[RMDB]
RNA sequence: GGGAACGACUCGAGUAGAGUCGAAAAAUCCCCCGGUUCCCCUUAUGUCCAGCCCCUCCCCGGUCCGAGAGAAGGGGGACUCCGGGACUCCUUGCAUGUUGGGGACGAAGCCGCCCCCGGGCGCUCCUAGCUAUUAUGUUCGCAUAAUAGAAAAGAAACAACAACAACAAC
Reactivity to DMS in 0.01 (KOAc 150mM, MgCl2 10mM, bicine 150mM(pH8.5), 24C), signal-to-noise 8, nucleotides 027 to 129: a140u050c050c020c010c070c120g010g010u020u020c000c010c010c110u020u040a030u050g000u030c030c070a140g030c030c030c010c020u010c000c000c020c040g000g000u000c000c000g000a090g020a070g010a090a060g050g020g020g000g010a070c020u000c070c150g020g000g030a100c040u000c010c000u000u000g020c110a030u000g000u060u020g010g000g000g000a020c080g000a060a190g000c080c060g000c020c010c000c010c020g020g020g030c060g010c020u020c000c000u030a100g030
Reactivity to 2A3 in 0.01 (KOAc 150mM, MgCl2 10mM, bicine 150mM(pH8.5), 24C), signal-to-noise 6, nucleotides 027 to 129: a000u040c020c010c000c000c000g060g010u010u000c010c000c000c010u050u130a120u200g080u020c020c000a010g010c030c000c000c010u010c000c000c000c000g020g020u020c040c030g070a080g010a010g020a110a080g020g010g010g010g010a010c010u010c030c010g020g000g030a020c010u020c010c000u050u060g050c050a090u090g030u130u070g050g000g000g020a010c020g050a060a000g030c050c010g000c010c000c000c000c000g010g000g000c020g000c000u020c010c010u020a060g040